[RMDB]
RNA sequence: GGGAACGACUCGAGUAGAGUCGAAAAGAUAUGGACCGUGGGAAGCAACAGCAUGCGGUCGGAAACGACCGUCAUGACAUGCUUUAGCGGUCCUAAGUCAAAACUCGUUAACUUCGGUUAACGAGAAGUUGACGUUGUACUUCGGUACAACGUCAACAAAAGAAACAACAACAACAAC
Reactivity to DMS in 0.01 (KOAc 150mM, MgCl2 10mM, bicine 150mM(pH8.5), 24C), signal-to-noise 1, nucleotides 027 to 126: g010a020u000a200u000g000g000a020c020c000g020u000g010g030g000a000a030g070c000a050a120c270a120g000c020a010u000g000c010g000g050u010c000g000g000a080a090a140c010g000a060c000c000g030u020c010a000u000g010a040c140a300u000g010c010u010u000u000a300g000c000g000g040u000c000c010u010a000a050g000u010c000a100a190a130a180c000u000c000g000u000u010a010a000c000u010u010c300g050g000u010u000a000a000c000g000a010g030a010a070
Reactivity to 2A3 in 0.01 (KOAc 150mM, MgCl2 10mM, bicine 150mM(pH8.5), 24C), signal-to-noise 2, nucleotides 027 to 126: g000a010u040a010u080g000g000a000c010c030g060u070g180g300g190a060a030g050c130a070a190c010a250g020c000a000u040g000c000g000g000u000c000g060g000a000a010a010c000g020a000c000c030g070u110c040a000u010g040a030c010a130u300g000c000u000u000u040a020g010c000g000g010u000c000c000u000a010a010g000u000c020a000a020a090a130c000u010c000g000u020u020a020a010c010u060u090c300g120g000u010u000a000a000c000g010a020g000a020a010